The data come from the RNA Mapping Database (RMDB), library OK2TST. An RNA of 177 nucleotides, treated with 2A3 and DMS and read out base by base. Values cover nucleotides 27 to 126. As a SHAPE reagent, 2A3 marks flexible, mostly unpaired nucleotides at the ribose 2'-OH. The RNA was probed in 150 mM KOAc, 10 mM MgCl2 and 150 mM bicine (pH 8.5) at 24 C.
RNA sequence: GGGAACGACUCGAGUAGAGUCGAAAAUUGUUCUUGGAGUCGACGUUUAUGUACUUCGCCUUGAAUCCCCUUACCUCCACAGCGUUACCAUUCUCGUCCUUUUGAAGUGCCUCAUAUACGGCAUCGAAACCAAGUAGUUCUUCGGAACUACUUGGUUAAAAGAAACAACAACAACAAC
Reactivity to 2A3 in 0.01 (KOAc 150mM, MgCl2 10mM, bicine 150mM(pH8.5), 24C), signal-to-noise 2, nucleotides 027 to 126: u060u060g010u020u000c010u000u040g020g010a000g010u050c030g030a060c030g070u150u210u100a160u150g010u040a110c030u010u000c020g030c000c000u030u060g070a090a130u100c000c000c000c010u030u060a040c010c010u030c000c000a030c020a000g040c020g050u070u020a050c010c020a050u070u030c030u010c030g080u050c000c000u030u080u070u090g050a080a050g000u010g010c030c000u040c030a020u090a000u000a130c050g010g030c010a010u010c040g040a040
Reactivity to DMS in 0.01 (KOAc 150mM, MgCl2 10mM, bicine 150mM(pH8.5), 24C), signal-to-noise 5, nucleotides 027 to 126: u010u020g010u000u000c010u000u010g020g000a080g030u010c040g020a060c060g010u010u010u010a100u020g010u000a080c050u010u000c040g000c030c020u010u010g010a080a070u010c030c000c010c080u000u000a110c060c010u000c010c020a090c090a060g010c040g010u000u010a070c050c020a110u010u000c020u000c060g020u010c040c030u000u000u000u000g010a080a110g020u000g000c020c020u000c160a090u010a150u000a090c160g000g010c020a020u000c060g000a110